[RMDB]
RNA sequence: GGGAACGACUCGAGUAGAGUCGAAAACGGUGGAUCCGUGGGAUGCUCUUCCCGAUUCUGUCCACUCCCCCCUCCAGGGGGUCGCCCAGGAAUGGCGGGACCCCACUUCAUCAGGGUCCCCGUUCCACAUAAUCUACAAGUUCGCUUGUAGAUUAUGAAAAGAAACAACAACAACAAC
Reactivity to DMS in 0.01 (KOAc 150mM, MgCl2 10mM, bicine 150mM(pH8.5), 24C), signal-to-noise 8, nucleotides 027 to 126: c190g010g010u000g000g000a020u000c160c130g020u000g010g010g010a050u010g010c210u010c130u010u000c010c000c000g000a120u000u000c090u000g000u000c000c010a040c030u000c040c000c000c000c020c040u010c140c120a160g010g010g010g010g010u000c080g010c010c000c010a130g010g010a030a030u000g020g040c110g020g010g000a010c010c000c000c070a070c110u010u010c180a090u010c200a140g000g010g000u000c010c000c010c010g000u000u000c010c010a300
Reactivity to 2A3 in 0.01 (KOAc 150mM, MgCl2 10mM, bicine 150mM(pH8.5), 24C), signal-to-noise 5, nucleotides 027 to 126: c040g020g010u020g010g030a030u070c120c060g070u210g010g000g000a020u090g070c100u060c070u180u030c030c000c000g000a030u140u050c030u120g030u010c010c010a010c040u090c000c000c000c000c000c000u080c050c050a050g000g000g010g020g010u020c050g020c000c000c010a000g040g050a020a020u100g300g020c140g040g010g000a010c000c040c030c000a040c030u180u160c040a230u080c050a020g010g000g000u000c010c000c000c000g010u000u010c020c000a010